[RMDB]
RNA sequence: GGGAACGACUCGAGUAGAGUCGAAAAACGACACAAUUCGUUGUGUCGUAAUGGAAAAGGCUAGGACCGGCCAGAGAAAGGUCCGAAAAGAUCGAAAGAUCACACGCCACGAAUUCGUUCGUGGCAAGUUUAUGGUUCCAUUCGUGGAACCAUAAACAAAAGAAACAACAACAACAAC
Reactivity to 2A3 in 0.01 (KOAc 150mM, MgCl2 10mM, bicine 150mM(pH8.5), 24C), signal-to-noise 5, nucleotides 027 to 126: a010c010g000a000c000a000c000a000a070u100u120c190g060u130u030g000u010g000u000c010g000u020a010a070u110g050g000a050a080a070a180g010g000c020u070a080g030g010a010c000c010g000g000c020c020a090g020a010g030a160a180a000g000g000u000c000c000g000a010a020a010a020g010a000u020c000g020a050a020a000g000a000u010c010a010c000a010c080g000c000c000a000c000g010a010a020u090u080c200g050u100u010c000g000u020g000g020c000a000a000
Reactivity to DMS in 0.01 (KOAc 150mM, MgCl2 10mM, bicine 150mM(pH8.5), 24C), signal-to-noise 3, nucleotides 027 to 126: a020c000g010a030c000a010c000a000a030u000u010c200g020u010u000g040u000g000u000c000g020u000a020a060u030g020g000a130a130a090a090g000g000c000u010a100g000g010a020c010c010g000g000c000c010a130g010a120g000a020a090a150g000g010u010c020c000g000a060a040a120a100g000a000u000c010g000a130a090a140g000a010u000c000a130c170a060c190g020c000c000a000c010g000a000a020u000u010c220g010u000u000c000g020u000g000g010c010a010a000

The record gives the reactivity of an RNA of 177 nucleotides to 2A3 and DMS. 2A3 adducts were read by reverse transcription with SuperScript II with manganese. The reactions ran in a buffer of 150 mM KOAc, 10 mM MgCl2 and 150 mM bicine (pH 8.5), at 24 C.